An RNA of 207 nucleotides, treated with 2A3 and read out base by base. For 2A3, 1,911 sequencing reads were counted. Source: RMDB library RNAMAK, as collected in RNAgym.

RNA sequence: GGGAACGACUCGAGUAGAGUCGAAAAGAUAUGGAAGUGCUUGUCAGUAACCUCCUUCGUUGAAACGAAAUCGGAAACGAUUUCGUGGAGAAGGAUGGUUACUUGGAUUUAGCACUUCCUAAGUCAAAACCCGGGGUUAGUUCGCUAACCCCGGGAAGAGUAUCAACAUCUUCGGAUGUUGAUACUCAAAAGAAACAACAACAACAAC
Reactivity to 2A3 in 0.01 (KOAc 150mM, MgCl2 10mM, bicine 150mM(pH8.5), 24C), signal-to-noise 2, nucleotides 027 to 156: g000a020u050a020u070g000g010a000a000g000u000g000c000u010u020g010u040c040a030g010u020a010a000c000c000u000c000c020u000u000c030g220u210u030g010a040a040a010c000g010a000a000a000u000c010g000g030a040a060a060c010g010a000u000u010u030c000g000u000g000g010a070g010a000a000g070g000a010u070g000g000u000u000a000c000u000u050g030g000a020u300u120u000a000g000c000a000c000u000u010c000c000u000a000a000g000u010c000a000a040a050a210c020c010c010g000g000g000g000u010u010a000g040u050u110c220g000c150u000a010a010c000c000c000c020g000g000g000a000a010